[RMDB]
RNA sequence: GGGAACGACUCGAGUAGAGUCGAAAAAGGGUCCUCACCCCUCACACUCCACCACUUCCAACAGUUUGUUUUGGUUUUAGCUAUUGGCUUCUGUAAUCACCAAGGGAUAGCAUACAUAGUAUUAAUCCUAAAAUAAGGCCUUCGGGCCUUAUUUUAGAAAAGAAACAACAACAACAAC
Reactivity to DMS in 0.01 (KOAc 150mM, MgCl2 10mM, bicine 150mM(pH8.5), 24C), signal-to-noise 1, nucleotides 027 to 126: a030g000g030g030u000c040c010u010c080a050c010c030c000c020u010c000a000c030a120c070u000c070c010a160c020c010a060c040u000u020c030c020a060a070c150a110g030u010u020u010g020u030u000u000u000g000g010u000u000u000u000a070g020c000u000a020u000u010g000g030c050u000u010c050u020g010u020a060a050u020c050a040c050c050a070a060g040g000g000a040u030a020g010c060a030u000a070c080a040u000a110g000u000a070u050u010a100a000u020c110
Structure probing data (DMS) for a 177-nucleotide construct. Source: RMDB library RFM100, as collected in RNAgym. For DMS the reverse transcriptase was MarathonRT.